Chemical mapping of a 177-nucleotide RNA with 2A3 and DMS.
For DMS, 779 sequencing reads were counted.
The reactions ran in a buffer of 150 mM KOAc, 10 mM MgCl2 and 150 mM bicine (pH 8.5), at 24 C.
RNA sequence: GGGAACGACUCGAGUAGAGUCGAAAAGAUAUGGACCUGAUACGGGAGCAGUUCGGAAACGAAUACUGCAUCGAUCGUAGAGGGUCCUAAGUCAAAACCAAACAGGACGUUCGCGUCCUGUUUGGAAGAUGGAUAACGCGUUCGCGCGUUAUCCAUCAAAAGAAACAACAACAACAAC
Reactivity to 2A3 in 0.01 (KOAc 150mM, MgCl2 10mM, bicine 150mM(pH8.5), 24C), signal-to-noise 1, nucleotides 027 to 126: g050a000u060a040u140g010g000a000c000c020u020g010a030u000a000c040g060g050g030a010g000c000a000g010u000u020c000g050g010a100a040a010c010g030a010a020u170a300c010u010g000c010a220u210c040g140a090u100c000g020u000a010g000a030g000g000g000u010c010c010u030a010a000g000u000c010a030a020a050a140c000c000a010a010a000c010a010g000g010a000c010g050u070u130c300g040c010g110u030c000c000u000g000u010u000u010g000g000a010a010
Reactivity to DMS in 0.01 (KOAc 150mM, MgCl2 10mM, bicine 150mM(pH8.5), 24C), signal-to-noise 1, nucleotides 027 to 126: g020a080u000a300u000g000g000a000c010c000u000g040a300u000a020c000g040g000g000a040g010c000a000g010u000u010c030g040g010a110a230a190c000g010a030a020u000a060c010u000g000c010a170u000c200g020a040u000c010g020u000a020g010a300g010g000g000u000c000c000u000a000a060g010u020c050a050a060a130a070c010c030a000a020a000c000a000g000g000a020c000g020u000u000c250g000c000g000u000c000c000u000g010u000u000u000g000g010a010a030